Overview: An RNA of 207 nucleotides, treated with 2A3 and read out base by base. For 2A3 the reverse transcriptase was SuperScript II with manganese. Conditions: 150 mM KOAc, 10 mM MgCl2 and 150 mM bicine (pH 8.5), 24 C.
[RMDB]
RNA sequence: GGGAACGACUCGAGUAGAGUCGAAAAAGGAUGGGAAAGCAUGCGCGCGCGCUCCGAUGCGGAUGGGAAAGCAUGCGGUGCCAUCCGAAACGUACGCACGUAUCGGCAUGCGAAAGGAUGGCGUACGGAAACCAUCCGCCUGCACUACAGACCUCGCCCUGACACUAGUGUUCGCACUAGUGUCAGGAAAAGAAACAACAACAACAAC
Reactivity to 2A3 in 0.01 (KOAc 150mM, MgCl2 10mM, bicine 150mM(pH8.5), 24C), signal-to-noise 2, nucleotides 027 to 156: a000g050g010a030u050g000g030g000a170a020a000g010c010a010u000g030c040g030c020g000c000g070c010g000c030u110c050c020g020a030u210g020c010g020g000a080u020g190g040g090a080a010a010g070c020a040u040g000c030g000g060u050g120c000c010a000u000c010c000g000a020a000a000c000g000u070a060c050g000c090a030c130g010u090a130u270c140g020g000c010a100u110g010c040g000a170a010a010g070g000a060u010g020g000c040g000u030a130c030g050g020a010a010a010c010c000a000u000c000c010g000c000c000u050g000c090a100c120u200a100c100a020g090a180c010c060u060c060g070c010